[RMDB]
RNA sequence: GGGAACGACUCGAGUAGAGUCGAAAAAUAGUGUUCUCUGAGAAAAGAGGGCACAGGCCAGUCCAGCUAAAGAAUAUUACCACCGCAGACGUGGCUCUCGGUGGGAUGCAUUUGACCACUUGCCUGGUCGUCUCCUAUAGUUCGCUAUAGGAGACGAAAAAGAAACAACAACAACAAC
Reactivity to 2A3 in 0.01 (KOAc 150mM, MgCl2 10mM, bicine 150mM(pH8.5), 24C), signal-to-noise 2, nucleotides 027 to 126: a020u150a030g000u030g010u020u000c000u000c010u030g040a080g140a250a190a060a000g010a010g000g000g000c030a020c030a020g010g000c000c010a000g020u000c010c030a000g000c030u070a030a050a090g050a130a050u050a070u170u060a180c000c000a000c000c030g060c160a010g000a030c110g300u230g200g000c040u030c000u010c020g020g000u020g000g010g000a010u020g000c020a080u000u000u110g070a060c050c010a000c020u010u020g020c010c010u010g010g000
Reactivity to DMS in 0.01 (KOAc 150mM, MgCl2 10mM, bicine 150mM(pH8.5), 24C), signal-to-noise 3, nucleotides 027 to 126: a070u010a090g020u000g010u000u000c000u010c000u000g010a250g010a120a080a140a040g000a020g000g000g000c010a030c020a090g010g000c010c030a040g010u010c030c090a090g020c050u010a030a090a180g000a060a040u000a040u010u010a210c020c000a010c010c000g010c250a010g000a030c020g010u010g020g010c110u000c010u000c040g000g010u000g010g000g000a020u000g010c160a080u000u000u000g000a110c100c080a060c030u010u010g020c090c030u000g000g000